[RMDB]
Background: Conditions: 150 mM KOAc, 10 mM MgCl2 and 150 mM bicine (pH 8.5), 24 C. An RNA of 177 nucleotides, treated with 2A3 and read out base by base. Values cover nucleotides 27 to 126. 2A3 adducts were read by reverse transcription with SuperScript II with manganese. The data come from the RNA Mapping Database (RMDB), library RFM100.
RNA sequence: GGGAACGACUCGAGUAGAGUCGAAAAUAUCGAAACAUUUAAUUGCGCUAAAUCGUUUCAUUAAAUAAAUUACCUUGUAUUGGCGAUUAAAUUAAGGUAAAUUAUAAAAAAUGCUGAUAUUUUUGACGACAUGCAAAUCUUUCGAGAUUUGCAUGUCAAAAGAAACAACAACAACAAC
Reactivity to 2A3 in 0.01 (KOAc 150mM, MgCl2 10mM, bicine 150mM(pH8.5), 24C), signal-to-noise 2, nucleotides 027 to 126: u110a030u020c060g010a080a030a000c000a010u030u040u010a060a050u110u140g060c100g010c060u030a030a040a020u060c040g030u040u120u100c010a030u070u200a060a080a090u080a000a080a000u000u010a010c010c000u030u050g090u160a030u040u060g080g000c020g010a020u040u300a070a050a020u020u060a010a080g000g000u000a040a050a060u100u030a040u170a030a130a020a020a020a000u070g030c030u020g090a040u030a060u020u020u000u020u090g060a030c090